[RMDB]
RNA sequence: GGGAACGACUCGAGUAGAGUCGAAAACCUAUUAUACCGGCUGAAACGGCAGUCCUCCCAGGAGCAAGUAAGGAGGGGAUGAGUUGAGGUUCAACCCUCCUAAGGACGCUUAGUAGAAUCCCCCUAAGGUUUAGUUGAAGUUCGCUUCAACUAAACCAAAAGAAACAACAACAACAAC
Reactivity to DMS in 0.01 (KOAc 150mM, MgCl2 10mM, bicine 150mM(pH8.5), 24C), signal-to-noise 2, nucleotides 027 to 126: c000c000u000a030u020u030a200u020a080c090c030g000g040c040u000g000a090a100a090c060g000g000c120a020g000u000c050c080u000c020c030c020a090g000g000a040g010c010a050a150g010u030a090a060g000g010a000g000g010g000g020a180u040g000a050g000u000u020g010a100g020g000u050u030c010a010a260c030c010c010u020c010c000u000a030a060g020g050a110c140g000c040u010u030a040g000u020a060g010a130a120u000c010c010c000c060c010u000a010a080
Reactivity to 2A3 in 0.01 (KOAc 150mM, MgCl2 10mM, bicine 150mM(pH8.5), 24C), signal-to-noise 3, nucleotides 027 to 126: c010c000u000a040u100u080a090u060a030c020c010g050g000c040u030g020a140a050a020c020g030g000c000a010g050u020c000c000u020c000c020c030a030g030g010a020g020c040a060a030g030u210a040a000g010g000a010g060g000g010g040a160u150g010a050g020u060u090g130a070g080g140u040u000c010a000a020c000c000c000u010c000c020u000a020a010g020g000a010c030g010c020u020u030a000g000u000a010g070a090a070u040c020c000c000c000c000u000a110a100